The data come from the RNA Mapping Database (RMDB), library OK2TST. The record gives the reactivity of an RNA of 177 nucleotides to 2A3 and DMS. The reactions ran in a buffer of 150 mM KOAc, 10 mM MgCl2 and 150 mM bicine (pH 8.5), at 24 C. For 2A3, 1,290 sequencing reads were counted.
RNA sequence: GGGAACGACUCGAGUAGAGUCGAAAAGGUAUAGGCCGCCGCGCCGCCGUUCAACAAGCUCACGAACUCGGCGUGAAACGUCGCCGCCCGGGCGUUGAGCGCUUGAAAUUGCUGACCGUAGGCGCCGGCAGGAGGAAGGAUUCGUCCUUCCUCCUGCAAAAGAAACAACAACAACAAC
Reactivity to 2A3 in 0.01 (KOAc 150mM, MgCl2 10mM, bicine 150mM(pH8.5), 24C), signal-to-noise 1, nucleotides 027 to 126: g130g020u110a080u150a230g110g000c040c010g050c030c020g030c060g000c020c000g010c000c010g000u000u030c000a020a010c000a020a060g010c020u010c040a090c040g110a100a040c060u020c050g010g050c000g000u050g000a130a100a000c070g050u020c020g030c070c000g010c000c020c030g010g000g010c000g020u040u110g000a020g000c000g000c000u120u250g060a100a190a170u130u080g000c020u040g000a060c000c010g000u020a080g020g010c000g010c090c040g030
Reactivity to DMS in 0.01 (KOAc 150mM, MgCl2 10mM, bicine 150mM(pH8.5), 24C), signal-to-noise 2, nucleotides 027 to 126: g010g020u020a160u010a090g040g020c060c040g040c080c100g010c020g000c010c000g000c130c050g000u000u000c040a030a040c030a010a070g000c110u000c070a230c150g010a090a050c090u010c060g000g010c010g020u000g010a090a070a070c080g010u000c040g020c030c110g010c040c020c020g000g000g000c010g000u010u010g000a240g000c020g010c100u000u000g000a020a130a150u020u000g030c000u000g000a050c010c040g000u000a060g000g000c010g010c060c140g010